[RMDB]
The data come from the RNA Mapping Database (RMDB), library M2RFPK. An RNA of 207 nucleotides, treated with 2A3 and DMS and read out base by base. For DMS, 12,740 sequencing reads were counted. 2A3 adducts were read by reverse transcription with SuperScript II with manganese. For 2A3, 4,335 sequencing reads were counted.
RNA sequence: GGGAACGACUCGAGUAGAGUCGAAAAGUAGAGUGUAUCAUGUCAGUAAGCAUGCCGGUGAAUGGUGGUUUACCCCGUUAUCAAAUGAUUACCGACCAAUAAUUGGCGAAACUCGUUUCGCGUUGGCAAAGUCACGGCGUGUUCGCACGCCGUGAAAACGGGAUAUAUGAUUCGUCAUAUAUCCCGUAAAAGAAACAACAACAACAAC
Reactivity to 2A3 in 0.01 (KOAc 150mM, MgCl2 10mM, bicine 150mM(pH8.5), 24C), signal-to-noise 5, nucleotides 027 to 156: g120u160a030g020a030g090u110g010u040a060u140c060a060u100g060u070c030a010g040u110a070a000g020c040a050u070g050c040c030g010g010u090g040a080a090u090g040g040u040g010g000u030u080u170a110c020c010c010c020g030u030u040a100u110c050a050a110a070u090g030a030u050u080a040c010c040g050a050c040c040a010a030u120a180a120u100u120g070g000c000g000a010a010a010c080u100c090g030u010u020u020c020g000c020g000u010u030g030g000c050a070a040a040g050u030c000a000c010g000g000c000g000u010g020u020u070c120g020c040a000c010g000c010c000g000u000g000a000a000a000
Reactivity to DMS in 0.01 (KOAc 150mM, MgCl2 10mM, bicine 150mM(pH8.5), 24C), signal-to-noise 4, nucleotides 027 to 156: g020u010a070g010a110g020u000g030u000a060u000c050a100u000g020u000c020a090g000u000a040a090g030c030a040u000g000c030c050g010g020u000g000a040a070u010g010g020u000g000g000u010u000u020a130c010c010c000c040g030u010u000a080u000c040a070a070a060u000g000a090u000u010a040c020c010g020a040c010c060a080a140u000a060a180u000u010g050g020c020g000a120a090a050c050u010c100g010u010u000u000c030g020c100g010u000u000g030g000c090a040a060a170g000u000c010a010c010g000g020c000g040u000g020u000u020c250g030c000a010c000g020c000c000g010u010g000a000a010a080